[RMDB]
RNA sequence: GGGAACGACUCGAGUAGAGUCGAAAAAGUUGGAUAAGAUUUCCCAGGCUAAUGUUAUCCAAGGCGAGUAUAUAGAAAGAAUGAAAGACAGGACUUUAUGUUGGGAAAGGAGAAAAAGAAGAGCCAAGGCAGGAGCAGUCAGAAGAGAGGGAACCCAACCACCACUAGUAUUCGUACUAGUGGUGGUAAAAGAAACAACAACAACAAC
Reactivity to 2A3 in 0.01 (KOAc 150mM, MgCl2 10mM, bicine 150mM(pH8.5), 24C), signal-to-noise 1, nucleotides 027 to 156: a030g050u050u000g010g030a080u030a100a060g010a200u020u050u000c010c040c000a020g050g000c050u200a050a120u150g010u050u080a010u000c000c000a050a000g010g020c060g060a030g110u030a040u030a040u030a240g150a030a070a010g080a100a090u080g040a120a030a000g030a060c020a000g010g090a020c050u080u230u170a110u250g030u000u050g020g080g000a030a060a000g040g010a040g080a000a080a000a000a000g050a060a000g010a000g050c080c030a030a000g030g000c000a010g000g000a000g000c010a000g000u040c020a010g020a110a000g020a100g000a020g070g020g000a040a040c050c070c000a020
Reactivity to DMS in 0.01 (KOAc 150mM, MgCl2 10mM, bicine 150mM(pH8.5), 24C), signal-to-noise 1, nucleotides 027 to 156: a190g000u000u000g010g020a040u000a130a160g030a220u010u010u000c050c010c040a260g030g030c040u000a070a070u000g000u000u000a030u000c010c000a030a120g000g020c010g000a150g020u000a070u000a090u000a100g000a080a040a110g010a100a070u000g010a090a040a130g020a100c070a080g030g030a070c080u000u000u000a070u060g060u000u000g010g000g000a050a070a060g000g000a090g020a050a000a020a020a120g020a060a100g000a030g030c080c040a020a080g010g030c010a090g000g030a100g040c070a120g040u020c040a060g020a070a020g000a070g010a090g020g010g000a080a090c000c010c040a090
Source: RMDB library OK3TST, as collected in RNAgym.
This 207-nucleotide RNA was probed chemically with 2A3 and DMS.
For DMS, 1,374 sequencing reads were counted.
2A3 adducts were read by reverse transcription with SuperScript II with manganese.